This 177-nucleotide RNA was probed chemically with DMS. DMS adducts were read by reverse transcription with MarathonRT. The DMS profile rests on 762 reads.

RNA sequence: GGGAACGACUCGAGUAGAGUCGAAAAGGGGUUAGCGUUUGCAAAACGCUGUUAUUGCAAUGAUCUGGAUUUAGCGCAAGUAGGUCCGAAAUCCAGAUCAACAUUUCGGUCCUCCGCGCUAAUAAAAUGGGUAAUGGAGGUUCGCCUCCAUUACCCAAAAAGAAACAACAACAACAAC
Reactivity to DMS in 0.01 (KOAc 150mM, MgCl2 10mM, bicine 150mM(pH8.5), 24C), signal-to-noise 1, nucleotides 027 to 126: g040g000g000g020u000u000a000g000c020g030u000u000u010g040c250a090a060a010a020c000g010c050u000g000u000u010a050u000u010g000c120a180a050u020g010a100u000c010u040g020g000a290u000u000u000a020g040c030g000c050a070a120g040u000a030g020g000u000c040c020g000a020a020a000u010c100c130a170g000a130u000c160a070a070c220a040u000u000u000c000g000g000u000c010c030u000c120c080g010c040g000c010u010a010a010u020a000a030a060a100